[RMDB]
Chemical mapping of a 177-nucleotide RNA with 2A3 and DMS. For 2A3, 2,234 sequencing reads were counted.
RNA sequence: GGGAACGACUCGAGUAGAGUCGAAAACGGUAUCUACACGCUGGUAAACGUCUACGUGAUGCACCUCGAGCUCUCGCUCGACGUCUGGCGGCUCGGACGCGCGGUCGGGAUCGCUGGCGGUAUCGCGUGGUCGACGCUAUUUCGAUAGCGUCGACCAAAAAGAAACAACAACAACAAC
Reactivity to 2A3 in 0.01 (KOAc 150mM, MgCl2 10mM, bicine 150mM(pH8.5), 24C), signal-to-noise 1, nucleotides 027 to 126: c010g040g000u020a070u100c030u080a050c060a000c130g000c040u040g070g000u120a110a110a020c020g030u000c030u050a010c020g000u050g000a020u040g000c010a130c100c020u000c000g010a020g030c010u040c040u100c170g000c000u000c000g000a000c010g000u000c000u000g040g040c010g040g000c030u050c010g040g020a040c020g020c060g000c100g080g010u010c020g000g010g080a160u070c020g000c050u040g020g020c030g040g000u030a020u060c000g000c000g010
Reactivity to DMS in 0.01 (KOAc 150mM, MgCl2 10mM, bicine 150mM(pH8.5), 24C), signal-to-noise 2, nucleotides 027 to 126: c100g010g000u010a030u010c030u000a100c080a100c030g010c060u000g010g010u000a010a110a130c030g010u000c040u000a040c050g000u000g010a010u000g040c030a160c120c110u010c010g010a040g000c050u000c200u010c130g000c000u000c000g030a030c020g010u010c000u020g030g020c030g010g000c060u000c010g030g020a100c030g040c130g000c110g000g000u000c020g010g000g010a000u000c020g000c020u000g000g010c070g020g010u000a020u000c010g020c030g010